[RMDB]
RNA sequence: GGGAACGACUCGAGUAGAGUCGAAAAGAGCUCAGGAGUUCAAGACCAGCCUGGCCAACAUGGCAAAACCUCACUUCUACCAAAAAUACAAAAAUUAUCUGGAUGUGGUGGUGUGUGCCUGUAGUCCGAAACAACCUUGGUUCGCCAAGGUUGUUUCAAAAGAAACAACAACAACAAC
Reactivity to 2A3 in 0.01 (KOAc 150mM, MgCl2 10mM, bicine 150mM(pH8.5), 24C), signal-to-noise 1, nucleotides 027 to 126: g000a040g010c060u070c130a010g020g110a010g030u150u140c160a140a030g080a080c010c000a000g000c010c010u010g000g000c000c000a080a010c000a100u160g010g000c000a000a030a000a090c020c010u000c000a020c010u070u000c010u080a110c020c030a050a080a080a000a020u240a030c090a000a130a070a150a130u280u130a170u090c030u040g020g000a000u040g050u040g010g040u050g010g040u020g030u030g010u060g030c020c010u010g000u110a110g030u000c030c050
Reactivity to DMS in 0.01 (KOAc 150mM, MgCl2 10mM, bicine 150mM(pH8.5), 24C), signal-to-noise 2, nucleotides 027 to 126: g030a210g010c020u030c070a020g010g040a130g020u030u010c140a090a140g030a080c090c030a120g000c020c090u010g000g020c050c030a090a050c040a070u000g040g010c040a040a030a140a020c000c030u000c030a040c010u000u000c020u000a160c080c050a010a060a090a100a060u020a130c150a030a050a050a050a100u010u010a000u010c080u000g020g000a060u000g000u010g000g020u040g000g010u000g000u010g020u000g030c040c000u010g010u010a070g000u020c050c100